[RMDB]
RNA sequence: GGGAACGACUCGAGUAGAGUCGAAAAAGUCUGAUAACUAAGGUACUUGAGGAACUAAGCCCCAAAGCUCCUGCUAGAUUAUUUUUGCCGUUUGUGUUGCAGAUUUGCCUUAUUCCUUAGGCUUUUCCGCCUCAAAAUAGUUCGCUAUUUUGAGGCGAAAAGAAACAACAACAACAAC
Reactivity to DMS in 0.01 (KOAc 150mM, MgCl2 10mM, bicine 150mM(pH8.5), 24C), signal-to-noise 2, nucleotides 027 to 126: a040g000u010c030u020g010a170u000a070a060c080u000a030a040g020g010u010a050c060u010u000g010a090g000g010a020a050c070u000a060a110g010c050c000c010c010a040a120a090g000c040u000c010c000u000g010c080u000a090g000a050u020u020a050u010u000u040u040u020g010c010c050g020u010u000u030g020u000g030u000u000g010c030a020g010a040u000u000u000g010c000c020u010u030a100u010u000c040c070u000u030a040g000g010c010u000u010u000u000c070
Reactivity to 2A3 in 0.01 (KOAc 150mM, MgCl2 10mM, bicine 150mM(pH8.5), 24C), signal-to-noise 3, nucleotides 027 to 126: a000g060u030c040u040g040a120u100a100a040c040u040a050a040g060g000u040a080c040u070u060g020a010g000g010a030a000c020u060a090a000g020c000c000c000c000a030a140a000g000c010u000c000c000u030g080c010u040a010g000a210u120u020a170u070u260u050u120u130g080c020c030g060u060u060u090g140u030g020u000u020g000c020a010g000a090u040u020u090g010c000c000u020u010a040u040u060c000c000u030u020a000g000g020c000u010u010u020u000c020